Description: The data come from the RNA Mapping Database (RMDB), library M2RFPK. Chemical mapping of a 207-nucleotide RNA with 2A3.
[RMDB]
RNA sequence: GGGAACGACUCGAGUAGAGUCGAAAAAACUCAGCUAGGGAGAGUAUAACAUUCAUGUUGACGAGACCUAGACGAAACACAGAGGAAAAUUAUUAAUCACUGGAUAGUAUUAGUAAUGACUCUGGGUAAAACUCUUCUACGUUCGCGUAGAAGAGAAGAUUGCUAGCCUGUUCGCAGGCUAGCAAUCAAAAGAAACAACAACAACAAC
Reactivity to 2A3 in 0.01 (KOAc 150mM, MgCl2 10mM, bicine 150mM(pH8.5), 24C), signal-to-noise 1, nucleotides 027 to 156: a000a000c000u010c000a000g000c010u000a000g020g000g020a060g000a010g040u060a160u040a300a040c040a020u160u200c090a020u250g010u020u020g020a050c050g010a000g060a100c000c020u010a000g000a010c010g050a000a010a000c050a010c000a020g000a000g040g040a020a290a020a000u000u010a000u000u000a010a000u050c060a000c010u000g070g050a100u300a300g000u000a000u000u000a010g020u010a020a000u000g060a000c000u060c000u050g020g000g050u050a010a010a040a060c000u000c010u000u050c000u000a010c000g040u010u040c250g000c000g070u000a000g000a010a000g000a000g000a000a000
The 2A3 profile rests on 419 reads.